[RMDB]
RNA sequence: GGGAACGACUCGAGUAGAGUCGAAAAAGAUAUGGAGAGGCACACUGAAUUUAGGAGCGUUGAAAGAGCUUCGGAAACGAAGCUCUGGAGCUCCUAUUAGUCAGUGUGAACUACCUCUCCUAAGUCACCUUCAAAAGAACUUCGGUUCUUUUGAAGGAAAAGAAACAACAACAACAAC
Reactivity to DMS in 0.01 (KOAc 150mM, MgCl2 10mM, bicine 150mM(pH8.5), 24C), signal-to-noise 2, nucleotides 027 to 126: a050g000a060u010a300u010g010g000a000g000a010g010g020c000a010c000a000c000u000g000a030a070u000u000u000a000g000g000a030g030c000g030u000u030g010a150a150a020g000a010g030c000u010u000c000g010g010a080a100a170c000g000a010a000g000c020u020c010u010g000g000a080g020c010u010c010c000u000a000u000u000a070g000u000c000a010g010u010g010u000g010a020a030c050u010a300c010c010u010c000u000c000c010u000a000a070g010u000c020a210